[RMDB]
This 177-nucleotide RNA was probed chemically with DMS and 2A3. The RNA was probed in 150 mM KOAc, 10 mM MgCl2 and 150 mM bicine (pH 8.5) at 24 C.

RNA sequence: GGGAACGACUCGAGUAGAGUCGAAAACUAUUGACUGUGUUUCCUAGGAGUCUUCUGGAUUGUACUUUAAAAUAACACUAGGUGCACUGUAUGCCAAUGCCAAUGAUUCCUUCAUAAAUGUGGUAUCCCGACUGUUUUUAUUCGUAAAAACAGUCGGAAAAGAAACAACAACAACAAC
Reactivity to DMS in 0.01 (KOAc 150mM, MgCl2 10mM, bicine 150mM(pH8.5), 24C), signal-to-noise 2, nucleotides 027 to 126: c090u000a100u020u000g000a090c080u000g010u000g000u000u000u020c000c060u000a070g000g000a110g000u010c030u000u000c140u020g020g030a130u000u020g010u000a050c100u000u000u020a010a060a110a050u000a100a100c070a160c070u000a020g040g020u020g010c020a000c050u010g010u000a050u030g010c050c030a050a040u000g000c020c030a010a050u010g000a160u000u010c040c010u000u010c120a050u010a030a030a110u010g010u000g020g000u000a080u010c150
Reactivity to 2A3 in 0.01 (KOAc 150mM, MgCl2 10mM, bicine 150mM(pH8.5), 24C), signal-to-noise 2, nucleotides 027 to 126: c040u050a070u160u230g120a070c060u040g010u020g000u120u200u200c010c000u000a030g000g010a080g040u000c000u110u040c130u260g060g080a090u120u080g030u070a050c020u130u220u130a080a210a090a150u100a090a070c030a000c110u030a020g000g040u000g040c030a000c030u040g080u070a060u070g040c050c010a050a010u070g010c020c010a040a020u020g030a030u060u000c020c030u000u140c070a110u140a240a160a100u180g020u040g040g040u030a050u020c020
2A3 adducts were read by reverse transcription with SuperScript II with manganese.